RNA sequence: GGGAACGACUCGAGUAGAGUCGAAAAGAUAUGGAAUGAACUACCUCGUUUUAUAGCGUUGAAAUUCUGGUGAAAUUCGGAAACGAAUUUCACCAGAAUGGAGCUGGGGACGAGGCAUUCCUAAGUCGCCAUGCUAUAAGUUCGCUUAUAGCAUGGCAAAAGAAACAACAACAACAAC
Reactivity to DMS in 0.01 (KOAc 150mM, MgCl2 10mM, bicine 150mM(pH8.5), 24C), signal-to-noise 1, nucleotides 027 to 126: g000a060u020a300u010g000g000a050a020u000g010a170a030c160u070a300c000c000u000c000g000u000u000u010u010a110u000a030g010c000g000u030u000g000a180a110a000u000u000c000u000g010g000u000g020a030a000a020u000u000c030g000g000a080a040a300c010g010a010a000u000u000u000c000a010c010c000a000g000a000a000u000g030g000a130g000c000u000g020g030g000g000a000c000g010a020g000g010c000a000u000u010c000c000u020a030a180g040u020c110
Reactivity to 2A3 in 0.01 (KOAc 150mM, MgCl2 10mM, bicine 150mM(pH8.5), 24C), signal-to-noise 1, nucleotides 027 to 126: g050a020u140a130u220g010g050a060a030u030g000a130a140c070u130a120c230c020u030c020g000u010u010u040u070a300u190a120g000c080g110u140u080g000a010a050a030u000u000c000u000g020g020u000g000a020a000a000u000u010c050g040g050a090a050a000c030g000a010a000u010u000u000c000a000c000c010a000g000a000a000u010g000g000a010g000c000u010g000g000g140g000a000c010g010a000g000g020c010a000u040u000c000c000u040a200a080g230u100c080